Structure probing data (2A3 and DMS) for a 177-nucleotide construct. 2A3 adducts were read by reverse transcription with SuperScript II with manganese. DMS (dimethyl sulfate) methylates the pairing face of unpaired adenines and cytosines. The reactions ran in a buffer of 150 mM KOAc, 10 mM MgCl2 and 150 mM bicine (pH 8.5), at 24 C. For DMS, 1,128 sequencing reads were counted.
[RMDB]
RNA sequence: GGGAACGACUCGAGUAGAGUCGAAAAGAUAUGGACCUAAGGGAGGACCCAGCUCCCUAUCGGAAACGAUAGUCAGCUGCCUUUGAUCUUAGGUCCUAAGUCAAACGUCGGCGUUCGCGCCGACGAACCCGUUAACAUACUUCGGUAUGUUAACGGGAAAAGAAACAACAACAACAAC
Reactivity to 2A3 in 0.01 (KOAc 150mM, MgCl2 10mM, bicine 150mM(pH8.5), 24C), signal-to-noise 2, nucleotides 027 to 126: g020a020u100a050u150g000g020a000c010c000u000a020a000g040g000g010a010g030g030a050c090c300c030a000g000c010u010c030c000c000u000a000u000c010g010g030a060a030a020c010g000a000u000a000g000u030c040a000g030c000u060g050c000c000u300u300u140g070a080u050c000u040u000a000g060g000u000c000c010u000a030a000g020u000c000a090a110a090c020g000u000c000g060g000c000g010u100u090c300g010c040g010c080c030g000a010c000g010a000a010
Reactivity to DMS in 0.01 (KOAc 150mM, MgCl2 10mM, bicine 150mM(pH8.5), 24C), signal-to-noise 1, nucleotides 027 to 126: g020a040u010a300u010g010g010a010c020c000u010a000a020g000g000g000a180g010g000a110c140c250c070a030g020c000u000c030c060c010u000a000u000c000g010g000a130a070a160c020g000a000u000a020g000u000c050a010g010c000u000g040c040c100u000u020u000g010a260u010c010u020u000a020g000g000u000c000c000u000a010a060g000u000c020a060a080a260c010g020u000c000g010g000c000g000u000u010c190g010c020g020c000c000g010a000c000g010a030a060